Description:
Chemical mapping of a 177-nucleotide RNA with DMS and 2A3. 2A3 adducts were read by reverse transcription with SuperScript II with manganese.

RNA sequence: GGGAACGACUCGAGUAGAGUCGAAAAAGGGCGAGAGAUGAAAUGCCAAGACCCCUGGUGGACUGAGCGAGGCGAAGGCGAUGUUCUUGUAGGCAUUCGGUGAUCAAGGACGAAGGCUGGAGUAUCGAAGAACCGUCAUUUUCGAAUGACGGUUCUUAAAAGAAACAACAACAACAAC
Reactivity to DMS in 0.01 (KOAc 150mM, MgCl2 10mM, bicine 150mM(pH8.5), 24C), signal-to-noise 3, nucleotides 027 to 126: a060g020g000g000c060g000a070g010a120g020a080u010g020a060a080a070u000g010c010c020a080a080g020a150c090c020c020c020u020g010g000u020g000g010a090c040u010g010a100g000c040g010a110g010g020c060g010a160a120g000g000c050g030a070u000g000u000u020c020u020u050g000u010a120g000g000c070a040u010u020c080g010g000u000g000a160u030c050a060a100g000g000a020c060g010a060a100g010g020c010u010g000g000a200g020u010a040u020c090g030
Reactivity to 2A3 in 0.01 (KOAc 150mM, MgCl2 10mM, bicine 150mM(pH8.5), 24C), signal-to-noise 1, nucleotides 027 to 126: a000g050g010g020c030g000a140g000a000g010a020u070g080a120a180a000u140g010c010c030a020a030g140a070c000c010c000c000u030g010g040u040g000g040a100c120u050g000a010g100c020g030a020g000g010c000g000a030a020g030g000c020g010a050u020g000u000u030c030u000u010g090u100a060g090g040c010a000u120u030c080g000g080u180g000a000u040c000a040a040g020g000a020c030g020a060a000g140g000c050u080g000g030a040g020u050a000u110c150g020